[RMDB]
Annotation
Structure probing data (DMS and 2A3) for a 177-nucleotide construct. Source: RMDB library TTRDES, as collected in RNAgym. Reactivities are given for positions 27 through 126. For DMS the reverse transcriptase was MarathonRT.
RNA sequence: GGGAACGACUCGAGUAGAGUCGAAAAGAUAUGGAGCUGUUGACAUGGCAGCGUUCGGAAACGAACGUUGUGCCAACAGCAACUGGCUCCUAAGUCAAACUUACAUUAGCUUCGGCUAAUGUAAGAAGGUACGUAGAUACUUCGGUAUCUACGUACCAAAAGAAACAACAACAACAAC
Reactivity to DMS in 0.01 (KOAc 150mM, MgCl2 10mM, bicine 150mM(pH8.5), 24C), signal-to-noise 3, nucleotides 027 to 126: g000a020u000a130u010g000g010a050g020c010u010g010u010u000g000a040c040a300u030g030g030c000a060g000c000g010u000u000c000g020g000a020a000a070c000g010a000a010c010g000u000u020g050u000g030c020c020a060a070c140a140g000c000a000a010c010u020g030g010c010u010c000c000u000a000a130g000u000c020a110a110a300c000u000u000a000c010a000u000u000a020g010c010u000u010c300g040g000c000u000a000a000u000g000u000a010a000g000a070a070
Reactivity to 2A3 in 0.01 (KOAc 150mM, MgCl2 10mM, bicine 150mM(pH8.5), 24C), signal-to-noise 5, nucleotides 027 to 126: g000a010u020a000u060g000g000a010g000c040u010g040u020u000g070a230c210a300u300g030g000c000a010g000c000g000u000u010c010g000g010a010a020a010c020g000a000a000c010g010u110u290g260u110g200c000c010a220a070c090a040g010c000a000a000c010u040g140g000c000u000c000c000u000a020a000g000u000c000a090a060a130c000u010u000a000c000a000u010u000a010g020c010u040u060c300g120g000c010u010a010a010u000g000u000a000a010g020a020a030